This 177-nucleotide RNA was probed chemically with 2A3 and DMS. The 2A3 profile rests on 3,741 reads. The reactions ran in a buffer of 150 mM KOAc, 10 mM MgCl2 and 150 mM bicine (pH 8.5), at 24 C. It was measured as part of the RMDB library OK1LIB.
[RMDB]
RNA sequence: GGGAACGACUCGAGUAGAGUCGAAAAUUCAAUAGUAAGUUCUUUACGUGUAACUUUAUCACCGUCAAUUGCUAAUCCAUAAGUGACAUCGGCAUUACCAACUGCUUUAAUAUUUGUGGUUGGACUACGCUUAGAUAGACUUCGGUCUAUCUAAGCGAAAAGAAACAACAACAACAAC
Reactivity to 2A3 in 0.01 (KOAc 150mM, MgCl2 10mM, bicine 150mM(pH8.5), 24C), signal-to-noise 6, nucleotides 027 to 126: u110u030c030a040a080u060a060g140u090a100a060g020u050u040c010u040u120u110a060c100g050u070g040u100a080a070c040u070u170u100a120u140c050a030c050c030g060u050c030a060a110u040u050g030c020u090a060a110u050c040c030a100u100a150a030g070u080g090a030c020a060u070c040g020g020c030a040u060u150a110c000c000a020a010c020u030g050c010u060u140u140a250a120u290a240u170u110u120g020u000g010g000u010u000g000g000a020c000u090a050
Reactivity to DMS in 0.01 (KOAc 150mM, MgCl2 10mM, bicine 150mM(pH8.5), 24C), signal-to-noise 2, nucleotides 027 to 126: u010u020c110a090a090u070a080g000u000a070a040g000u000u000c000u010u010u060a080c090g000u000g000u010a040a020c040u020u020u010a030u050c050a060c000c000g020u020c140a050a050u010u000g000c060u010a070a090u000c030c000a060u030a060a050g010u000g000a020c060a080u010c030g000g030c100a080u010u050a100c000c030a000a000c000u000g000c000u010u000u030a100a190u000a110u020u010u000g000u000g000g020u000u010g000g010a070c080u020a110